[RMDB]
RNA sequence: GGGAACGACUCGAGUAGAGUCGAAAAAUCUGGUGGGCAUCCUGCGAUACAAGUAGCCUUACCAUUGACAUCUGUUUUGAAGAGAUGUGGAUUUGCCCACAUAUCACUUGAAUCUUCCGCUACGUAGUCACUGGCACGGGUUCGCCCGUGCCAGUGAAAAAGAAACAACAACAACAAC
Reactivity to 2A3 in 0.01 (KOAc 150mM, MgCl2 10mM, bicine 150mM(pH8.5), 24C), signal-to-noise 1, nucleotides 027 to 126: a010u000c000u070g150g000u010g040g000g000c000a050u020c000c050u000g000c070g000a020u070a210c000a000a300g000u060a050g130c000c000u000u000a070c040c060a000u000u000g000a000c000a000u000c000u000g250u110u050u000u280g260a200a050g070a040g000a040u000g000u000g020g020a040u060u000u080g020c050c000c000a090c000a000u070a000u000c040a010c000u000u020g000a000a000u000c000u010u020c020c010g140c120u040a020c100g060u020a040g000